This 177-nucleotide RNA was probed chemically with DMS and 2A3. Source: RMDB library OK2TRN, as collected in RNAgym. 2A3 adducts were read by reverse transcription with SuperScript II with manganese.
[RMDB]
RNA sequence: GGGAACGACUCGAGUAGAGUCGAAAAGAGCGCCAGCACCCUGGCAGGUGACCCGAUCACCGCGCGCCUGACUGCUGCUCCGGGCAACGGUGCUUCUAUUGGCGGUCUGAAAGUGAUGACUGACAACACGUGUAUCCGAUUUCGAUCGGAUACACGUAAAAGAAACAACAACAACAAC
Reactivity to DMS in 0.01 (KOAc 150mM, MgCl2 10mM, bicine 150mM(pH8.5), 24C), signal-to-noise 1, nucleotides 027 to 126: g000a050g020c030g000c020c000a030g000c060a130c020c010c030u010g030g030c080a080g020g010u010g010a070c010c060c060g010a180u010c040a070c010c010g000c070g010c110g000c010c010u000g000a070c120u010g050c020u010g040c040u000c050c000g010g000g010c050a200a110c070g000g000u000g000c110u000u000c090u010a170u000u000g000g000c000g010g020u000c020u000g000a110a040a080g000u020g030a070u000g000a090c040u000g020a030c040a050a040c230
Reactivity to 2A3 in 0.01 (KOAc 150mM, MgCl2 10mM, bicine 150mM(pH8.5), 24C), signal-to-noise 1, nucleotides 027 to 126: g020a010g070c010g000c010c010a040g000c050a020c030c020c050u060g120g000c080a030g000g000u020g020a110c040c100c090g030a100u040c040a000c050c010g000c010g000c030g010c020c010u090g020a220c040u040g070c040u060g000c010u100c080c050g020g020g030c010a040a000c020g000g000u010g000c010u070u040c050u060a250u070u100g070g030c000g060g120u040c020u000g090a070a080a010g120u060g110a170u190g030a020c020u040g050a020c060a060a010c030